RNA sequence: GGGAACGACUCGAGUAGAGUCGAAAAUGGUAAUGGAUUUAUGGUGGGUCCUUCUCUGUGGGCCUCUCAUAGUGUACCCAUGCCAUAGCAAAUGGCAGCCUCGAACCAUUGCCCAGUCCCCUUACCUGCCGUAGGGACGGUUCGCCGUCCCUACGGCAAAAGAAACAACAACAACAAC
Reactivity to 2A3 in 0.01 (KOAc 150mM, MgCl2 10mM, bicine 150mM(pH8.5), 24C), signal-to-noise 1, nucleotides 027 to 126: u060g010g000u080a000a000u010g070g130a200u010u020u020a030u040g000g050u050g100g000g000u000c010c050u170u000c130u000c070u050g200u070g130g000g010c010c060u010c000u000c010a000u060a020g040u130g150u260a230c060c080c000a100u010g030c000c000a010u010a080g160c070a040a140a080u030g000g000c060a000g030c000c100u040c030g000a020a010c000c000a000u000u000g000c020c000c000a020g070u000c000c000c000c000u000u010a000c010c010u000

Structure probing data (2A3) for a 177-nucleotide construct.
Values are in units of 0.01, from 0 to 300, in steps of 10.
The RNA was probed in 150 mM KOAc, 10 mM MgCl2 and 150 mM bicine (pH 8.5) at 24 C.
Reactivities are given for positions 27 through 126.